[RMDB]
RNA sequence: GGGAACGACUCGAGUAGAGUCGAAAAUGGUCGUGGUGUCUGUCCACAGCAGUAAAACCCUAACUAAAACACCACAUUAGAAUGAAUGGAUGCUUAAUAAUGGCAAAUGGAUAGAUAGACAAUUAUACGUGAGUCAGUGAUUCGUCACUGACUCACGAAAAGAAACAACAACAACAAC
Reactivity to DMS in 0.01 (KOAc 150mM, MgCl2 10mM, bicine 150mM(pH8.5), 24C), signal-to-noise 1, nucleotides 027 to 126: u040g010g000u000c100g030u000g030g020u000g000u000c000u000g040u020c010c050a030c210a080g000c090a040g010u000a010a160a170a080c020c010c000u020a060a250c230u020a040a030a090a070c010a000c000c010a000c020a080u000u020a110g000a170a090u010g000a110a030u000g020g000a050u020g030c050u020u000a040a110u020a090a070u000g000g000c000a050a010a070u000g020g010a060u000a000g000a060u000a150g000a020c140a020a060u000u000a170u000a250
Reactivity to 2A3 in 0.01 (KOAc 150mM, MgCl2 10mM, bicine 150mM(pH8.5), 24C), signal-to-noise 1, nucleotides 027 to 126: u150g130g000u130c140g040u010g000g000u010g000u000c030u030g000u000c060c060a050c050a080g000c010a020g020u030a030a060a080a080c000c000c000u000a050a020c010u100a080a050a000a000c020a000c020c020a020c000a020u010u020a100g180a190a180u080g000a060a020u080g060g030a020u100g010c030u000u130a160a000u150a170a040u200g030g000c000a020a040a000u070g050g020a020u000a060g080a030u050a030g050a030c000a050a000u110u120a110u120a080

This 177-nucleotide RNA was probed chemically with DMS and 2A3. It was measured as part of the RMDB library OK2TST. DMS adducts were read by reverse transcription with MarathonRT.